[RMDB]
RNA sequence: GGGAACGACUCGAGUAGAGUCGAAAACAUCAGGAGGACCUUCCGCGCAGUUCCAAGCAGGAGCUUUCCUUCCAAGCGCACUUCCAAUCUACUCGAGAGGAGGAGGAGGAGGAGGAUUCCCACAAAACCGUACCAUGGAAUUCGUUCCAUGGUACGGAAAAGAAACAACAACAACAAC
Reactivity to DMS in 0.01 (KOAc 150mM, MgCl2 10mM, bicine 150mM(pH8.5), 24C), signal-to-noise 2, nucleotides 027 to 126: c130a090u020c080a110g020g010a090g010g010a070c300c070u010u020c030c030g010c000g040c050a140g010u000u010c030c030a070a240g040c070a110g020g030a020g000c080u000u020u000c010c000u000u000c020c040a080a080g040c070g000c080a120c070u000u000c030c030a170a130u000c010u000a040c020u000c000g010a010g000a150g020g000a100g000g000a080g000g020a060g010g020a130g000g000a080g030g000a250u000u000c000c010c010a140c250a050a050a090a110
Reactivity to 2A3 in 0.01 (KOAc 150mM, MgCl2 10mM, bicine 150mM(pH8.5), 24C), signal-to-noise 2, nucleotides 027 to 126: c020a090u200c070a020g010g040a030g030g030a030c020c010u090u000c030c020g040c030g000c030a040g050u060u040c040c010a010a000g050c040a060g020g070a020g040c020u040u050u040c000c000u120u010c030c010a100a030g060c010g000c070a030c040u030u000c030c010a020a090u020c000u040a030c020u030c060g000a030g010a040g070g010a060g020g020a040g030g000a050g000g000a000g010g030a030g020g000a090u040u000c000c010c010a030c020a010a070a010a020
This 177-nucleotide RNA was probed chemically with DMS and 2A3. The 2A3 profile rests on 2,967 reads. For DMS the reverse transcriptase was MarathonRT. For 2A3 the reverse transcriptase was SuperScript II with manganese. The DMS profile rests on 1,188 reads. Conditions: 150 mM KOAc, 10 mM MgCl2 and 150 mM bicine (pH 8.5), 24 C.